[RMDB]
RNA sequence: GGGAACGACUCGAGUAGAGUCGAAAAGAUAUGGAGGCUGAUAGGCCUUGGAUUUAUAUUGAAAUUGGUACAAUCGGAAACGAUUGUACCAACACAAUAUUGUCAGGCUAUACAGCCUCCUAAGUCACAUAUCGUAUUGGUUCGCCAAUACGAUAUGAAAAGAAACAACAACAACAAC
Reactivity to 2A3 in 0.01 (KOAc 150mM, MgCl2 10mM, bicine 150mM(pH8.5), 24C), signal-to-noise 3, nucleotides 027 to 126: g050a010u080a030u160g000g000a000g000g000c010u010g030a120u060a090g190g190c000c000u020u090g030g000a020u120u300u080a040u010a010u020u030g050a160a210a150u040u010g030g000u000a000c010a000a010u000c010g020g050a060a090a050c040g010a000u000u000g000u010a000c000c000a000a000c000a000c000a000a020u010a000u010u030g010u010c010a000g000g020c010u030a060u040a300c030a000g010c000c000u010c000c000u010a010a000g020u000c000a020
Reactivity to DMS in 0.01 (KOAc 150mM, MgCl2 10mM, bicine 150mM(pH8.5), 24C), signal-to-noise 5, nucleotides 027 to 126: g010a040u000a300u010g000g010a010g020g020c000u000g010a100u000a080g010g000c000c000u000u020g030g020a030u010u020u010a000u000a010u000u000g000a040a110a300u010u000g010g000u000a000c000a000a010u000c000g010g000a160a150a230c000g010a010u000u000g000u000a000c000c000a000a000c300a300c000a010a010u000a000u000u000g000u000c010a020g000g000c000u000a060u000a150c000a000g010c000c010u010c010c010u000a010a040g010u010c040a290